RNA sequence: GGGAACGACUCGAGUAGAGUCGAAAAUGCGCAUUGUACUGACCUUGGUAACAUUGUUAAAUCAAGAAUGGCUUUAAAUAACAACAUUUCUUUAUCCAGAGAGCUAACUAAUGAUGAAGUAACUUCUGUACGUCUUUUAGCAAGUAAAAAUACUGAACGACUAGGUUAUAUUCGUAUAACCUAGUCGAAAAGAAACAACAACAACAAC
Reactivity to DMS in 0.01 (KOAc 150mM, MgCl2 10mM, bicine 150mM(pH8.5), 24C), signal-to-noise 3, nucleotides 027 to 156: u010g030c090g000c040a170u000u010g020u000a060c050u000g020a120c020c030u000u000g030g010u000a040a080c040a050u000u000g020u000u000a030a060a090u010c050a050a070g000a050a030u000g010g000c040u000u000u000a070a070a150u010a080a060c030a040a050c060a080u010u000u000c020u010u000u000a110u060c030c030a110g020a150g000a140g000c020u010a060a060c040u000a030a050u000g000a100u010g000a040a100g000u000a040a070c020u000u000c050u000g010u010a030c050g000u010c010u000u000u000u000a040g010c040a060a060g030u010a020a050a060a030a160u000a110c030u010g010a040a220
Reactivity to 2A3 in 0.01 (KOAc 150mM, MgCl2 10mM, bicine 150mM(pH8.5), 24C), signal-to-noise 6, nucleotides 027 to 156: u110g010c060g010c040a070u040u120g040u070a050c020u040g050a040c000c020u000u050g000g010u030a060a030c010a040u030u030g010u030u090a060a070a050u050c020a020a000g030a060a050u030g000g010c000u120u130u130a150a170a090u170a080a020c060a030a030c010a090u070u110u050c020u040u110u090a090u060c040c020a010g020a020g010a010g100c040u040a020a050c010u040a140a020u110g030a050u070g030a030a010g020u050a050a090c030u070u040c020u070g060u040a020c010g040u030c010u020u110u020u030a020g020c060a070a010g050u170a020a090a000a020a040u250a130c120u190g040a050a010